This 177-nucleotide RNA was probed chemically with DMS and 2A3. The 2A3 profile rests on 825 reads.

[RMDB]
RNA sequence: GGGAACGACUCGAGUAGAGUCGAAAAUGUUUCAAAUCAUAACACAAGAAGGAUGGACAGAUUUUGUGGUUGAAGUUUUGAGAGCAACUGACGAUAAUUUGGUACCUCUUGUGGCUCUCUAUUUUGACAGCGCUAUAAAUUUCGAUUUAUAGCGCUGAAAAGAAACAACAACAACAAC
Reactivity to DMS in 0.01 (KOAc 150mM, MgCl2 10mM, bicine 150mM(pH8.5), 24C), signal-to-noise 2, nucleotides 027 to 126: u000g020u000u000u000c070a070a060a160u010c110a080u010a040a030c020a010c010a010a000g000a080a060g000g000a160u010g020g010a080c030a080g010a030u010u000u000u000g020u000g020g020u010u020g010a060a070g020u000u000u010u010g010a030g000a040g010c000a020a020c020u000g020a010c020g010a010u020a010a000u000u000u020g010g020u000a060c010c000u000c010u000u000g010u000g020g020c020u010c000u000c000u010a130u000u010u010u000g010a220
Reactivity to 2A3 in 0.01 (KOAc 150mM, MgCl2 10mM, bicine 150mM(pH8.5), 24C), signal-to-noise 2, nucleotides 027 to 126: u040g020u000u030u000c020a030a080a060u050c020a070u100a290a000c040a000c000a000a040g080a090a090g070g010a140u190g160g300a090c050a050g090a040u070u050u050u060g070u010g000g170u040u100g100a120a050g000u090u070u080u120g060a050g000a010g040c000a000a040c020u130g080a030c020g020a020u030a160a050u090u050u070g240g090u060a050c000c030u040c020u060u010g030u000g010g050c010u010c000u000c020u040a160u060u090u060u040g030a020